Chemical mapping of a 177-nucleotide RNA with DMS and 2A3.
It was measured as part of the RMDB library M2PK50.
The DMS profile rests on 2,462 reads.
The reactions ran in a buffer of 150 mM KOAc, 10 mM MgCl2 and 150 mM bicine (pH 8.5), at 24 C.
The 2A3 profile rests on 3,551 reads.

RNA sequence: GGGAACGACUCGAGUAGAGUCGAAAAAGUUUCCAAUUCGUUGGAAACUACUGUCGGAAUGCGGAAUAUAAAAUCCUCCGCUUAAGGAUUUAACCGACUUAAAGUACACUAGUUUCGACUAGUGUAAGGUACAUCAAGUUUUCGAACUUGAUGUACCAAAAGAAACAACAACAACAAC
Reactivity to DMS in 0.01 (KOAc 150mM, MgCl2 10mM, bicine 150mM(pH8.5), 24C), signal-to-noise 3, nucleotides 027 to 126: a240g010u000u000u000c000c000a000a040u000u000c150g040u000u010g000g000a010a010a010c000u000a040c050u000g020u000c000g000g010a150a110u000g010c010g000g010a010a010u000a090u000a100a050a140a130u000c300c060u000c020c000g010c010u000u000a050a080g010g000a130u000u000u000a090a120c000c010g000a010c000u000u010a060a040a090g000u010a010c000a010c000u010a010g010u000u000u020c200g010a030c000u000a000g020u000g000u000a020a010
Reactivity to 2A3 in 0.01 (KOAc 150mM, MgCl2 10mM, bicine 150mM(pH8.5), 24C), signal-to-noise 3, nucleotides 027 to 126: a000g000u000u000u000c000c000a010a030u080u050c140g030u020u020g000g000a020a000a000c010u030a050c040u040g000u000c010g000g030a150a020u080g000c000g010g070a050a010u120a010u080a090a120a010a050u060c010c010u000c010c020g020c010u000u030a050a010g050g020a030u100u130u120a060a030c000c000g000a010c010u020u130a160a070a020g070u030a000c000a000c010u010a000g010u010u030u110c210g080a010c010u010a010g000u000g000u010a000a020